An RNA of 207 nucleotides, treated with 2A3 and DMS and read out base by base. The reactions ran in a buffer of 150 mM KOAc, 10 mM MgCl2 and 150 mM bicine (pH 8.5), at 24 C. It was measured as part of the RMDB library OK3TST. As a SHAPE reagent, 2A3 marks flexible, mostly unpaired nucleotides at the ribose 2'-OH. The 2A3 profile rests on 675 reads.
RNA sequence: GGGAACGACUCGAGUAGAGUCGAAAAUAAUUAUUUCAGUAGCUGCAGUGCAAAGCACAUUCAGGUGAAUAUAAUCAGACUGUCCUAGUUCCAAGGAGAAGCAGUAGUAACAGGUCUGGCAUCAGGCUCAGAGCUAUAGACGAGUCACAGCUUAUAAUCAUACUGACGGUUUCGACCGUCAGUAUGAAAAAGAAACAACAACAACAAC
Reactivity to 2A3 in 0.01 (KOAc 150mM, MgCl2 10mM, bicine 150mM(pH8.5), 24C), signal-to-noise 1, nucleotides 027 to 156: u050a000a030u130u160a100u020u080u090c020a030g070u090a010g070c010u020g000c010a020g010u010g010c060a170a070a070g050c020a010c030a080u090u120c030a020g040g110u030g040a090a000u140a010u030a060a070u110c000a000g000a040c010u010g030u020c000c030u020a010g030u060u000c010c010a000a020g000g010a050g020a030a020g000c030a000g000u090a020g050u040a020a050c020a030g000g070u070c040u040g000g060c050a050u070c030a020g050g010c000u000c030a040g060a010g000c000u020a030u070a280g060a060c030g000a000g000u000c020a020c050a080g000c010u000u200a080u190a120a070
Reactivity to DMS in 0.01 (KOAc 150mM, MgCl2 10mM, bicine 150mM(pH8.5), 24C), signal-to-noise 1, nucleotides 027 to 156: u010a040a060u000u000a080u010u020u000c030a240g020u000a080g030c020u000g020c030a100g000u010g050c050a110a050a110g020c040a020c030a140u000u000c100a020g000g000u000g030a040a160u010a080u000a050a140u000c010a040g010a070c000u010g010u010c020c030u000a130g020u000u000c080c050a070a150g000g000a120g040a070a090g000c040a100g060u000a110g000u000a020a060c040a030g000g010u000c030u010g030g000c090a100u000c080a000g000g000c010u000c010a130g000a090g010c020u020a080u010a110g000a130c070g000a110g000u000c030a020c090a070g000c080u010u000a130u000a080a190